[RMDB]
Record summary
The data come from the RNA Mapping Database (RMDB), library TTRDEL. This 177-nucleotide RNA was probed chemically with 2A3 and DMS. High DMS reactivity at an A or C suggests that its Watson-Crick edge is free. 2A3 adducts were read by reverse transcription with SuperScript II with manganese.

RNA sequence: GGGAACGACUCGAGUAGAGUCGAAAAGAUAUGGAUGGACGCGAUAAGUCGAUGGUCGGAAACGACCAUUCGACUUUUGACGCGUCGAUCCUAAGUCAAAAGAAAAUGCGCUUCGGCGCAUUUUCAACAGAGGGUAACAGUUCGCUGUUACCCUCUGAAAAGAAACAACAACAACAAC
Reactivity to 2A3 in 0.01 (KOAc 150mM, MgCl2 10mM, bicine 150mM(pH8.5), 24C), signal-to-noise 1, nucleotides 027 to 126: g030a000u050a020u130g010g010a010u060g160g000a020c020g030c000g060a090u030a300a100g020u020c000g000a000u030g000g020u000c000g020g000a040a030a020c030g000a000c000c070a010u040u030c000g000a010c000u010u000u000u040g000a010c000g000c020g000u000c000g010a000u030c000c000u000a060a020g030u000c020a090a030a080a000g000a000a000a000a000u010g000c000g000c040u040u170c300g040g000c000g030c030a010u030u010u010u000c000a030a010
Reactivity to DMS in 0.01 (KOAc 150mM, MgCl2 10mM, bicine 150mM(pH8.5), 24C), signal-to-noise 2, nucleotides 027 to 126: g000a010u010a260u010g010g000a040u010g010g010a020c000g000c000g010a110u000a020a050g020u000c000g010a010u000g010g000u000c030g010g000a040a050a120c000g020a000c000c000a010u010u000c010g020a020c000u000u010u010u010g010a180c030g010c000g000u000c000g000a000u000c000c010u000a010a080g000u010c010a060a130a140a150g010a020a010a000a000u000g000c000g010c000u000u010c270g020g020c000g000c000a000u000u000u000u000c000a120a180
The RNA was probed in 150 mM KOAc, 10 mM MgCl2 and 150 mM bicine (pH 8.5) at 24 C.